[RMDB]
RNA sequence: GGGAACGACUCGAGUAGAGUCGAAAAAACUCAGCUAGGGAGAGUAUAACAUUCAUGUUGACGAGACCUAGACGAAACACAGAGGAAAAUUAUUAAUCACUAGAUAGUAUUAGUAAUGACUCUGUGUAAAACUCUUCUACGUUCGCGUAGAAGAGAACGAGAUACCACUGUUCGCAGUGGUAUCUCGAAAAGAAACAACAACAACAAC
Reactivity to 2A3 in 0.01 (KOAc 150mM, MgCl2 10mM, bicine 150mM(pH8.5), 24C), signal-to-noise 2, nucleotides 027 to 156: a000a020c020u000c010a010g060c000u000a000g000g010g010a050g010a030g060u110a190u060a300a010c040a010u120u300c140a110u220g020u040u040g060a060c020g030a030g060a150c000c000u000a000g020a020c000g000a000a060a000c000a010c000a000g000a010g020g000a070a220a190a000u000u000a000u040u000a010a010u000c050a000c010u010a040g060a200u300a260g100u020a000u000u010a020g000u000a000a010u010g040a000c000u000c000u000g030u000g010u000a000a000a000a000c000u010c000u000u010c000u000a000c000g020u010u040c270g010c020g180u000a000g000a000a000g000a000g020a010a010